[RMDB]
RNA sequence: GGGAACGACUCGAGUAGAGUCGAAAAUCGUUAGAGAGUUAGGUAGCUAAGCCCUUGGUGUAUACACCAACACCAAAGACGAUGGUGAGCAUCGAAUAAGCUACAAAGGUAGAACUCAAGAUGCGAGGAGUGGAUACAGGUUCGCCUGUAUCCACUCAAAAGAAACAACAACAACAAC
Reactivity to 2A3 in 0.01 (KOAc 150mM, MgCl2 10mM, bicine 150mM(pH8.5), 24C), signal-to-noise 1, nucleotides 027 to 126: u010c000g000u000u090a040g000a000g000a010g100u000u070a050g010g130u110a010g000c010u040a050a070g040c070c000c000u010u010g050g020u000g010u010a060u000a100c130a050c020c010a020a000c000a000c000c030a010a030a030g070a060c070g010a020u010g020g090u080g110a060g140c000a000u010c010g000a010a040u120a190a000g000c010u000a010c000a060a120a000g120g010u100a070g000a160a010c000u000c040a020a000g110a040u130g000c020g000a030g040
Reactivity to DMS in 0.01 (KOAc 150mM, MgCl2 10mM, bicine 150mM(pH8.5), 24C), signal-to-noise 2, nucleotides 027 to 126: u030c010g030u000u030a040g050a160g000a010g000u000u000a060g000g010u000a030g010c000u020a090a280g020c120c020c020u000u010g000g000u000g000u000a070u010a120c140a090c170c210a060a020c000a000c010c000a020a010a050g000a240c060g010a050u000g000g000u000g000a090g020c010a010u000c000g020a130a030u000a060a100g010c010u000a000c000a040a060a180g050g000u010a070g000a010a000c020u000c050a100a160g000a090u000g010c050g040a090g010